The record gives the reactivity of an RNA of 177 nucleotides to 2A3 and DMS. 2A3 adducts were read by reverse transcription with SuperScript II with manganese. For DMS the reverse transcriptase was MarathonRT. The reactions ran in a buffer of 150 mM KOAc, 10 mM MgCl2 and 150 mM bicine (pH 8.5), at 24 C.

RNA sequence: GGGAACGACUCGAGUAGAGUCGAAAAGAUAUGGAGGAGGAUGGCAGCAACGAUCAUGGGUCGGAAACGACCCAUGUUUAGCUGCAUCUCCUCCUAAGUCAAACCUAAAUGCUUCGGCAUUUAGGAAGAUGUUCCUAUACUUCGGUAUAGGAACAUCAAAAGAAACAACAACAACAAC
Reactivity to 2A3 in 0.01 (KOAc 150mM, MgCl2 10mM, bicine 150mM(pH8.5), 24C), signal-to-noise 5, nucleotides 027 to 126: g020a000u010a000u080g000g000a000g020g010a020g130g030a090u220g300g000c010a010g000c000a130a300c060g010a020u000c000a000u000g010g000g000u010c000g000g000a000a020a000c000g000a010c000c000c000a000u000g000u000u000u010a010g000c000u000g000c000a010u010c000u000c000c000u010c000c010u000a000a000g010u010c020a030a040a140c000c000u010a000a000a000u010g000c000u040u090c290g200g000c010a000u010u000u010a000g000g000a010a050
Reactivity to DMS in 0.01 (KOAc 150mM, MgCl2 10mM, bicine 150mM(pH8.5), 24C), signal-to-noise 5, nucleotides 027 to 126: g010a010u000a190u000g000g010a020g010g010a030g020g010a090u010g030g030c000a010g020c020a300a300c300g000a040u000c010a010u010g000g000g010u010c000g010g000a030a060a120c000g010a000c000c000c000a000u000g000u000u010u000a110g020c010u010g010c000a040u010c000u000c010c000u000c000c000u000a010a040g000u000c020a110a140a270c000c000u000a000a010a000u000g000c000u000u020c260g020g010c000a000u000u000u010a000g000g020a030a050